[RMDB]
RNA sequence: GGGAACGACUCGAGUAGAGUCGAAAAUUGGAGCCCGGAGUGUCGAAUGUCUGGUCGCCGACGUUGACGUUGGUAGCGCCCACGAAUUCGCCGCAGGAGAGCUUCGCGUUUCCUGCCCAACUGCAGGGCUUGCUCAUAGGUUCGCCUAUGAGCAAGCAAAAGAAACAACAACAACAAC
Reactivity to 2A3 in 0.01 (KOAc 150mM, MgCl2 10mM, bicine 150mM(pH8.5), 24C), signal-to-noise 1, nucleotides 027 to 126: u040u030g030g000a000g010c000c060c100g000g180a280g030u060g020u000c000g000a010a040u070g140u300c040u050g020g050u010c000g000c020c030g050a040c040g040u090u300g090a120c030g000u020u000g070g090u050a100g020c020g010c010c000c010a040c160g010a030a050u000u000c000g000c010c000g040c030a000g120g100a130g000a010g020c030u020u000c030g000c000g040u060u050u000c000c010u020g000c030c010c000a100a160c090u250g000c080a100g000g060
Reactivity to DMS in 0.01 (KOAc 150mM, MgCl2 10mM, bicine 150mM(pH8.5), 24C), signal-to-noise 1, nucleotides 027 to 126: u010u000g000g020a040g000c020c020c010g030g000a180g020u000g000u000c020g020a050a030u000g010u010c020u000g020g010u010c010g010c000c020g020a010c000g010u010u030g010a130c050g040u000u000g040g000u010a130g050c020g030c200c010c090a010c130g020a110a060u000u000c000g000c070c010g030c000a050g050g000a300g000a030g010c030u000u010c090g020c160g000u000u000u000c010c020u000g010c000c070c040a060a120c170u010g000c130a100g010g000
Conditions: 150 mM KOAc, 10 mM MgCl2 and 150 mM bicine (pH 8.5), 24 C.
This 177-nucleotide RNA was probed chemically with 2A3 and DMS.
The data come from the RNA Mapping Database (RMDB), library OK2TRN.
For DMS, 1,193 sequencing reads were counted.
DMS adducts were read by reverse transcription with MarathonRT.
2A3 adducts were read by reverse transcription with SuperScript II with manganese.